[RMDB]
RNA sequence: GGGAACGACUCGAGUAGAGUCGAAAAUUACAGGCGCGCACCUGCUCGUGGAGGGCCCCGAGCGUACGUGCCGGAUCGUCCCCGCCGGUGGGUUUCCCCUCACUCCUCUCUCCUGAUCCCGCCACGACAAUCCGUUCCAAUUCGUUGGAACGGAUUGAAAAGAAACAACAACAACAAC
Reactivity to 2A3 in 0.01 (KOAc 150mM, MgCl2 10mM, bicine 150mM(pH8.5), 24C), signal-to-noise 1, nucleotides 027 to 126: u110u030a120c040a080g010g000c020g020c000g020c030a030c040c050u070g010c010u020c000g010u120g040g050a240g070g140g120c000c020c000c040g030a010g010c010g000u100a020c030g030u040g030c000c000g000g000a050u050c040g060u020c030c000c000c000g000c030c030g020g000u080g040g000g000u010u030u040c000c000c020c000u000c010a050c020u000c020c000u030c010u000c010u000c000c000u010g020a050u020c010c000c010g010c070c040a110c030g050a010
Reactivity to DMS in 0.01 (KOAc 150mM, MgCl2 10mM, bicine 150mM(pH8.5), 24C), signal-to-noise 3, nucleotides 027 to 126: u000u010a120c100a130g030g000c000g020c030g000c030a060c060c180u000g020c010u000c090g020u020g020g020a250g020g010g010c090c020c030c010g000a030g000c020g020u000a030c050g020u000g020c010c020g000g000a040u000c090g000u010c010c000c000c080g010c040c030g010g020u010g000g000g010u000u010u000c020c010c010c060u010c050a100c040u010c020c010u000c030u000c030u000c010c020u020g000a110u010c010c010c010g010c040c040a090c120g020a220
Structure probing data (2A3 and DMS) for a 177-nucleotide construct. Reactivities are given for positions 27 through 126. For DMS, 3,025 sequencing reads were counted. In probing experiments dimethyl sulfate is read out at A N1 and C N3, which are open when not base-paired. The data come from the RNA Mapping Database (RMDB), library OK2TRN.